Description
An RNA of 207 nucleotides, treated with DMS and 2A3 and read out base by base. 2A3 adducts were read by reverse transcription with SuperScript II with manganese. Reactivities are given for positions 27 through 156. The 2A3 profile rests on 7,422 reads. The RNA was probed in 150 mM KOAc, 10 mM MgCl2 and 150 mM bicine (pH 8.5) at 24 C.
RNA sequence: GGGAACGACUCGAGUAGAGUCGAAAAGAUCUGCGCCGAUCCGAAACGCUAGCAAACAGCCCGCAUCAUGUCGUCUCCUAACUUCGACGUGGUGAAAUACUGAGCUUAUGCGAGUAAGGCUGUUAGCAAUAGAUCAGAACGUUCGCGUUCUGAUCAACCCUUCUACCUGAUUCGUCAGGUAGAAGGGAAAAGAAACAACAACAACAAC
Reactivity to DMS in 0.01 (KOAc 150mM, MgCl2 10mM, bicine 150mM(pH8.5), 24C), signal-to-noise 3, nucleotides 027 to 156: g000a120u000c010u000g020c050g000c010c050g000a060u000c070c040g010a160a110a080c090g000c010u000a040g040c040a090a080a150c100a060g010c030c010c080g010c020a030u000c020a040u000g010u000c020g020u000c090u000c090c040u010a070a080c060u010u000c000g020a020c010g070u010g000g020u000g000a070a120a200u000a110c060u000g010a150g010c010u010u000a240u010g050c030g000a060g000u020a070a140g010g000c020u000g030u020u010a130g030c030a100a100u020a120g000a020u000c000a030g010a010a020c010g040u000u030c300g040c030g010u000u010c000u000g000a010u000c000a020a070
Reactivity to 2A3 in 0.01 (KOAc 150mM, MgCl2 10mM, bicine 150mM(pH8.5), 24C), signal-to-noise 4, nucleotides 027 to 156: g040a060u030c020u080g030c030g010c060c040g030a070u030c020c030g050a050a080a040c080g010c110u080a050g020c050a050a030a020c010a010g000c000c000c030g030c000a000u000c000a000u020g000u010c000g020u000c050u080c080c090u120a160a160c070u070u050c020g000a010c000g000u000g000g000u020g020a040a020a010u100a010c020u070g060a070g070c030u250u260a080u300g010c010g000a010g030u050a080a010g000g000c000u000g010u020u010a000g000c000a050a110u050a150g010a000u010c000a000g000a000a000c010g010u040u040c150g010c000g100u000u020c020u000g000a000u000c000a000a000